This 177-nucleotide RNA was probed chemically with DMS and 2A3. Values cover nucleotides 27 to 126. It was measured as part of the RMDB libraries RFM100 and RFMREP.
RNA sequence: GGGAACGACUCGAGUAGAGUCGAAAAACGAGGAGGUUGAACAUCCUGCAUAGUGCUGCCAGGAAAUCCCUACUUCAUACUAAGAGGGGGCUGGCUGGUUGCAUAUGUAGGAUGUCCCAUCUCCUGGAGGCACUUUAAUUUUCGAAUUAAAGUGCCUAAAAGAAACAACAACAACAAC
Reactivity to DMS in 0.01 (KOAc 150mM, MgCl2 10mM, bicine 150mM(pH8.5), 24C), signal-to-noise 4, nucleotides 027 to 126: a120c020g000a030g000g000a040g020g020u000u000g000a090a020c010a000u020c000c000u000g000c020a010u010a030g020u000g000c000u000g000c030c000a000g010g010a180a170a140u010c010c000c000u010a220c010u010u000c180a130u070a190c300u020a010a050g020a300g000g000g000g000g000c140u010g010g000c000u000g010g000u000u000g010c000a030u000a000u000g010u000a030g000g000a000u000g010u010c020c010c050a020u000c000u000c000c000u010g000g010
Reactivity to 2A3 in 0.01 (KOAc 150mM, MgCl2 10mM, bicine 150mM(pH8.5), 24C), signal-to-noise 9, nucleotides 027 to 126: a010c070g010a010g000g000a000g000g010u000u010g010a010a000c000a000u000c000c000u000g000c000a010u010a030g260u050g030c010u010g010c000c010a040g100g130a030a050a060u070c010c000c010u080a300c010u070u050c040a120u070a300c080u150a150a010g010a060g010g010g000g000g030c030u040g190g050c000u010g000g010u010u020g000c000a010u000a000u010g000u000a000g000g000a000u000g000u000c000c000c000a000u000c000u000c000c000u000g030g040